Chemical mapping of a 207-nucleotide RNA with DMS and 2A3. The RNA was probed in 150 mM KOAc, 10 mM MgCl2 and 150 mM bicine (pH 8.5) at 24 C. DMS adducts were read by reverse transcription with MarathonRT.
RNA sequence: GGGAACGACUCGAGUAGAGUCGAAAAGUUAGGUGAGGCUCCUAUGCAAACACAGGCCACUGCCCAAAAAUGUCCAAAGACGCCAAUGGGUAGAACAGGGAUUGUCGGAUUAAGGCUUUCUAUAAUGAAAACAAAGUAUGCUUCGGCAUACUUUGAACUUAAUGGUAACCUUCGGGUUACCAUUAAGAAAAGAAACAACAACAACAAC
Reactivity to DMS in 0.01 (KOAc 150mM, MgCl2 10mM, bicine 150mM(pH8.5), 24C), signal-to-noise 2, nucleotides 027 to 156: g010u000u000a020g030g050u000g010a120g010g040c010u000c010c040u000a100u020g010c060a050a040a080c040a090c060a090g040g000c020c030a120c000u010g010c040c010c000a000a030a090a100a040u000g010u000c030c050a100a080a170g000a030c060g010c030c050a030a200u000g010g000g080u000a070g010a100a070c050a120g030g010g020a090u000u000g000u000c020g000g000a130u000u000a090a080g010g030c030u000u000u000c030u000a110u010a050a080u010g000a050a090a090a120c000a000a010a020g040u000a000u000g010c000u000u000c300g100g040c010a000u000a020c000u000u000u000g000a060a100
Reactivity to 2A3 in 0.01 (KOAc 150mM, MgCl2 10mM, bicine 150mM(pH8.5), 24C), signal-to-noise 2, nucleotides 027 to 156: g050u070u060a030g000g030u020g030a040g030g010c020u050c040c000u080a060u130g040c070a100a050a030c000a030c020a140g030g040c020c020a030c020u040g010c000c000c000a000a070a000a010a000u030g010u030c040c010a170a070a100g010a000c020g000c030c040a020a030u020g010g030g000u000a000g020a020a030c040a060g020g010g020a030u050u030g050u070c030g040g000a040u100u070a080a010g020g010c000u020u120u000c060u060a170u060a200a140u130g100a010a100a020a000c010a010a000a000g000u000a000u000g000c030u030u100c180g080g000c000a010u000a000c000u000u010u000g000a000a000

Source: RMDB library M2RFPK, as collected in RNAgym.
For 2A3, 1,530 sequencing reads were counted.